[RMDB]
RNA sequence: GGGAACGACUCGAGUAGAGUCGAAAAGAACGAAACUUCGGUUUCGUUCAAAUAAUGCGUAGCUCGCGCUACGGAGGCAACGAGUAGGUCGUGCCACCUACAAAAGAUUUUAGUUCGCUAAAAUCAACCCCUCAAUUUAGUUCGCUAAAUUGAGGGGAAAAGAAACAACAACAACAAC
Reactivity to DMS in 0.01 (KOAc 150mM, MgCl2 10mM, bicine 150mM(pH8.5), 24C), signal-to-noise 2, nucleotides 027 to 126: g020a010a000c000g010a000a010a010c000u010u020c230g040g030u000u010u000c000g000u000u000c000a020a050a090u020a100a050u000g000c000g030u000a010g020c010u010c300g010c300g000c000u010a000c010g000g000a100g010g020c080a060a040c090g010a120g000u000a020g010g010u000c030g010u010g020c050c070a080c030c020u000a000c050a090a070a090a110g010a020u000u000u000u010a010g000u000u000c240g010c010u000a000a000a000a000u010c010a150a130
Reactivity to 2A3 in 0.01 (KOAc 150mM, MgCl2 10mM, bicine 150mM(pH8.5), 24C), signal-to-noise 3, nucleotides 027 to 126: g010a000a010c010g000a010a000a000c010u050u070c190g090g000u000u010u000c000g000u000u000c010a010a010a000u150a030a040u130g100c000g000u000a000g010c030u030c160g090c030g000c020u000a000c020g000g030a050g050g000c060a100a030c080g020a030g050u040a040g020g110u100c060g080u070g070c060c020a020c010c010u020a040c020a000a130a020a040g020a010u010u020u000u020a010g020u020u030c240g000c080u000a000a000a000a030u000c010a030a090